[RMDB]
RNA sequence: GGGAACGACUCGAGUAGAGUCGAAAACGCGCAGCCAGAAGUAGAACGCGAGAUACGCGUGCGGCGGCACGAGAUCGGCAUCGUGGUAGUUCGCAUAGUCGUCGUCGCCGCGCGAGCGCGACGGCUAGAUCCUCAUCGCUUUCGAGCGAUGAGGAUCAAAAGAAACAACAACAACAAC
Reactivity to DMS in 0.01 (KOAc 150mM, MgCl2 10mM, bicine 150mM(pH8.5), 24C), signal-to-noise 1, nucleotides 027 to 126: c030g000c040g040c020a080g010c060c000a140g010a070a200g010u020a110g020a110a040c010g010c000g020a190g010a140u010a130c000g010c040g000u000g020c110g050g020c040g000g000c000a000c040g030a100g000a230u000c000g000g000c020a090u000c030g000u010g000g000u000a120g050u000u000c010g000c070a260u000a020g010u000c000g010u000c000g000u010c020g050c010c050g000c100g020c170g000a090g030c050g010c020g010a020c020g010g000c020u010a020
Reactivity to 2A3 in 0.01 (KOAc 150mM, MgCl2 10mM, bicine 150mM(pH8.5), 24C), signal-to-noise 2, nucleotides 027 to 126: c030g000c010g040c040a010g000c010c020a100g110a240a040g150u240a040g040a160a010c000g020c000g040a060g050a230u250a120c060g030c000g050u050g030c030g000g000c000g030g010c000a020c010g050a040g010a050u080c020g000g000c030a050u010c010g020u010g010g050u040a050g010u060u050c070g040c300a040u010a020g060u000c010g000u000c020g110u150c070g000c000c020g040c030g000c030g020a040g020c030g030c000g020a000c000g000g000c000u000a040